An RNA of 177 nucleotides, treated with DMS and 2A3 and read out base by base.

RNA sequence: GGGAACGACUCGAGUAGAGUCGAAAAACUAGGAGCGCACAUCUCUCUAAGACUGUACGAGAGUCUGUCUCUCUAGCACGCUUGUUCAACGAGAGAGAGAGAGCGUUGGAACAAGUGUGCAACGAAAGACCUGUUUUACUUUCGAGUAAAACAGGUCAAAAGAAACAACAACAACAAC
Reactivity to DMS in 0.01 (KOAc 150mM, MgCl2 10mM, bicine 150mM(pH8.5), 24C), signal-to-noise 3, nucleotides 027 to 126: a100c190u000a060g000g000a030g000c120g010c150a110c140a100u020c010u000c020u000c040u000a070a170g000a010c020u000g000u000a010c050g000a300g010a020g010u000c020u010g000u000c090u000c000u000c060u010a240g000c000a010c000g020c000u000u020g010u000u000c000a030a010c020g000a070g030a140g000a080g010a080g000a060g010a110g010c000g000u000u000g010g000a020a010c000a000a020g020u010g000u000g000c000a070a070c200g000a050a110a070
Reactivity to 2A3 in 0.01 (KOAc 150mM, MgCl2 10mM, bicine 150mM(pH8.5), 24C), signal-to-noise 6, nucleotides 027 to 126: a010c100u090a040g020g020a020g040c070g070c080a040c030a280u080c020u010c010u000c000u040a080a050g020a020c010u060g120u160a010c010g010a000g000a000g050u000c010u020g000u000c030u000c000u000c030u060a020g000c000a000c010g000c000u010u000g000u010u000c000a000a000c000g010a020g000a010g000a010g000a010g010a010g010a170g050c010g000u010u020g170g020a020a010c000a010a000g000u000g000u000g000c000a010a010c040g060a060a060a010